[RMDB]
RNA sequence: GGGAACGACUCGAGUAGAGUCGAAAAACAGCGACAAUGGAAUCCCUUAUUGCCCAGGGCAUUCCGCGAGUACACCGGUGGGCACGCGGGGUGGACGUGCAACGUUUCGCGCCGUCGGCGCGAAACGCCCUACUUGGAUAUUCGUAUCCAAGUAGGGAAAAGAAACAACAACAACAAC
Reactivity to 2A3 in 0.01 (KOAc 150mM, MgCl2 10mM, bicine 150mM(pH8.5), 24C), signal-to-noise 2, nucleotides 027 to 126: a000c040a030g090c060g150a050c070a120a070u160g060g020a060a050u050c000c010c020u020u130a200u060u110g030c010c000c030a050g070g010g010c010a020u020u030c010c010g000c010g030a020g020u080a060c060a060c060c040g100g080u130g070g000g030c040a010c010g040c020g000g000g030g050u060g010g050a030c040g030u070g030c030a080a040c030g000u020u000u050c030g000c020g000c000c010g260u270c300g040g000c000g000c010g000a000a000a000c000g030
Reactivity to DMS in 0.01 (KOAc 150mM, MgCl2 10mM, bicine 150mM(pH8.5), 24C), signal-to-noise 1, nucleotides 027 to 126: a120c110a110g000c080g020a070c090a090a080u000g010g010a090a080u010c020c000c000u000u020a140u020u000g000c040c010c060a060g000g010g000c130a060u000u000c010c010g000c120g020a070g030u010a040c130a100c010c070g020g010u000g020g000g020c030a030c090g000c080g010g000g000g010u000g000g000a080c070g020u010g010c060a070a220c070g020u000u000u000c000g000c000g000c020c020g000u010c130g100g000c010g000c030g000a000a010a000c010g040